The data come from the RNA Mapping Database (RMDB), libraries RFM100 and RFMREP. Structure probing data (2A3 and DMS) for a 177-nucleotide construct. 2A3 adducts were read by reverse transcription with SuperScript II with manganese. Values are in units of 0.01, from 0 to 300, in steps of 10. Values cover nucleotides 27 to 126.

RNA sequence: GGGAACGACUCGAGUAGAGUCGAAAACGUGCCGAAAUUGCGCGUUCUGCGCGGAACACGUAUACUUUCAGUGUUGACAUAAUACAGUGUGCUUUGCGGUUACCAGCCGCAGGCGACUGACGAAACCCCGUGCCUAAUACUUCGGUAUUAGGCACGGAAAAGAAACAACAACAACAAC
Reactivity to 2A3 in 0.01 (KOAc 150mM, MgCl2 10mM, bicine 150mM(pH8.5), 24C), signal-to-noise 3, nucleotides 027 to 126: c000g030u020g060c100c030g100a010a150a120u230u200g020c020g000c000g000u150u080c110u180g080c030g000c000g020g010a100a010c030a000c000g010u020a030u080a140c070u090u180u130c100a150g020u000g000u170u030g030a030c060a160u230a110a030u190a190c000a000g030u110g000u060g110c010u270u300u050g000c020g000g040u070u060a170c040c030a020g020c000c000g000c000a000g000g000c010g010a000c000u030g000a020c050g030a040a010a000c020c000
Reactivity to DMS in 0.01 (KOAc 150mM, MgCl2 10mM, bicine 150mM(pH8.5), 24C), signal-to-noise 2, nucleotides 027 to 126: c070g000u020g000c060c060g050a010a040a090u030u010g000c000g040c020g010u040u000c090u010g000c120g010c090g000g000a070a050c010a030c060g000u010a020u000a070c290u010u010u000c030a150g000u000g000u000u000g040a070c220a070u010a050a170u030a110c020a010g000u000g010u000g010c000u010u020u030g010c000g000g000u000u040a100c270c300a150g000c000c000g000c000a010g000g000c000g000a020c000u030g010a070c120g000a060a150a160c130c010
About this RNA: The reactions ran in a buffer of 150 mM KOAc, 10 mM MgCl2 and 150 mM bicine (pH 8.5), at 24 C.